[RMDB]
RNA sequence: GGGAACGACUCGAGUAGAGUCGAAAAUUCACUCCGAGUUAGACGAUACGAUUAUCGAUGCUGGACAAAAAGUAGGUCUGUUUAUCGAUUCGGGAAACCUCGAUCUUCAUGUCAGUGGCAUCGCCCCUCGUGGACAGCUCAUUGCUCGUUAUGUCGGGGAAGAUGACGUUUUCGAACGUCAUCUUCCAAAAGAAACAACAACAACAAC
Reactivity to 2A3 in 0.01 (KOAc 150mM, MgCl2 10mM, bicine 150mM(pH8.5), 24C), signal-to-noise 1, nucleotides 027 to 156: u080u020c010a080c080u000c040c020g000a020g030u120u120a030g080a020c080g040a040u090a080c030g040a070u000u140a080u300c000g030a020u040g000c000u010g060g040a000c030a000a150a000a000a000g140u120a010g000g050u000c060u020g070u010u050u000a110u020c040g090a140u140u070c150g010g010g000a000a000a050c000c010u080c140g060a060u010c040u040u000c040a030u080g010u010c000a000g070u040g170g070c040a000u040c010g010c000c000c000c000u010c020g000u110g010g000a040c040a050g040c070u040c080a120u110u110g020c000u030c010g000u000u120a090u080g010u020c010g020g000

An RNA of 207 nucleotides, treated with 2A3 and read out base by base. It was measured as part of the RMDB library OK3TST. For 2A3, 472 sequencing reads were counted.